The record gives the reactivity of an RNA of 177 nucleotides to 2A3 and DMS.
[RMDB]
RNA sequence: GGGAACGACUCGAGUAGAGUCGAAAACAACAGUACCGCAAGGACCCCAAAGAGUGCUGCAAGUUCAUGUGUCUGGACCCAGGUGAGACUCUUGAUAGGACGUCCCAAGUCAGCCUCCCUAUUUGGGCUUUGGGUACUGAUUCGUCAGUACCCAAAGAAAAGAAACAACAACAACAAC
Reactivity to 2A3 in 0.01 (KOAc 150mM, MgCl2 10mM, bicine 150mM(pH8.5), 24C), signal-to-noise 6, nucleotides 027 to 126: c030a020a000c020a030g080u100a100c020c030g040c090a060a030g030g040a140c000c000c000c000a030a080a000g050a020g030u090g030c020u030g020c050a080a040g010u040u050c050a050u140g080u030g080u140c070u050g050g030a060c000c010c020a050g010g050u080g040a060g020a010c030u010c000u090u080g060a110u090a110g070g030a040c040g040u020c000c000c000a040a030g050u050c020a010g030c000c010u060c000c000c010u080a150u070u090u090g020g020g000
Reactivity to DMS in 0.01 (KOAc 150mM, MgCl2 10mM, bicine 150mM(pH8.5), 24C), signal-to-noise 3, nucleotides 027 to 126: c080a090a090c180a060g000u010a100c020c000g030c090a040a110g010g000a150c080c040c010c030a040a090a050g010a050g010u020g010c010u000g000c100a130a090g010u000u000c050a050u030g000u030g000u010c040u010g000g010a060c030c010c040a090g030g030u010g020a100g000a060c010u010c010u000u010g000a130u040a090g000g000a110c120g000u000c000c000c000a080a140g000u010c050a080g010c040c030u020c040c040c020u010a060u000u020u010g010g000g010
About this RNA
Conditions: 150 mM KOAc, 10 mM MgCl2 and 150 mM bicine (pH 8.5), 24 C.